[RMDB]
RNA sequence: GGGAACGACUCGAGUAGAGUCGAAAAGAGCUGAAGUACAGCAAGAACGACGGUAUCCUUGGCAAAGCGUCGAAGAUAAGCGUGCCGAAUGCCAAGGAUUAACGGCACGCGAGGCGAAGACGCCAGAAUCCGAUACCCGAUUCGUCGGGUAUCGGAUAAAAGAAACAACAACAACAAC
Reactivity to 2A3 in 0.01 (KOAc 150mM, MgCl2 10mM, bicine 150mM(pH8.5), 24C), signal-to-noise 3, nucleotides 027 to 126: g120a020g010c030u030g020a230a010g160u220a130c010a010g000c020a010a030g040a130a010c050g050a010c010g010g000u130a040u010c010c020u000u010g000g000c020a140a050a030g020c050g040u030c020g110a070a000g020a060u180a150a070g000c020g010u020g000c000c010g090a110a070u060g010c000c020a020a000g000g000a010u000u020a000a000c010g000g000c000a000c000g010c010g020a040g010g000c050g030a150a050g070a120c060g000c000c010a030g060a030
Reactivity to DMS in 0.01 (KOAc 150mM, MgCl2 10mM, bicine 150mM(pH8.5), 24C), signal-to-noise 3, nucleotides 027 to 126: g000a100g000c000u010g000a120a170g070u040a200c090a010g020c050a170a120g030a190a130c120g000a100c080g010g030u030a000u000c000c000u010u010g030g000c010a090a060a200g050c080g000u010c060g000a160a130g000a140u020a050a180g000c030g000u000g000c000c000g050a160a060u040g020c030c000a040a020g000g020a020u020u010a040a040c000g000g020c020a000c000g000c010g020a060g000g000c040g010a250a150g000a100c010g060c020c070a090g000a100
This 177-nucleotide RNA was probed chemically with 2A3 and DMS. The DMS profile rests on 2,697 reads. DMS adducts were read by reverse transcription with MarathonRT.